[RMDB]
RNA sequence: GGGAACGACUCGAGUAGAGUCGAAAAGUCGACUAUACAGUGUGUCCAGCUGUCGCCGUUUGACGGCCAAGUUUCGAGGACCUUCUUUGCUUCGGUUUCAUCAGUCUUGAACAGAUGAUCACCAUGUGGAUAGGCUAUGCUUCGGCAUAGCCUAUCCAAAAGAAACAACAACAACAAC
Reactivity to 2A3 in 0.01 (KOAc 150mM, MgCl2 10mM, bicine 150mM(pH8.5), 24C), signal-to-noise 2, nucleotides 027 to 126: g190u080c030g050a040c100u030a060u060a100c050a030g010u020g090u050g180u170c010c000a030g000c020u020g000u060c030g000c000c020g000u010u300u280g180a090c000g030g000c000c000a110a000g090u000u190u150c130g120a170g000g000a010c000c000u000u000c020u000u000u100g000c000u030u040c020g100g000u000u030u140c050a090u050c000a000g020u030c000u040u300g080a240a000c010a020g000a070u070g000a030u000c000a010c020c000a070u190g000u020
This 177-nucleotide RNA was probed chemically with 2A3. Source: RMDB library OK1LIB, as collected in RNAgym. Values cover nucleotides 27 to 126. Conditions: 150 mM KOAc, 10 mM MgCl2 and 150 mM bicine (pH 8.5), 24 C. For 2A3, 536 sequencing reads were counted.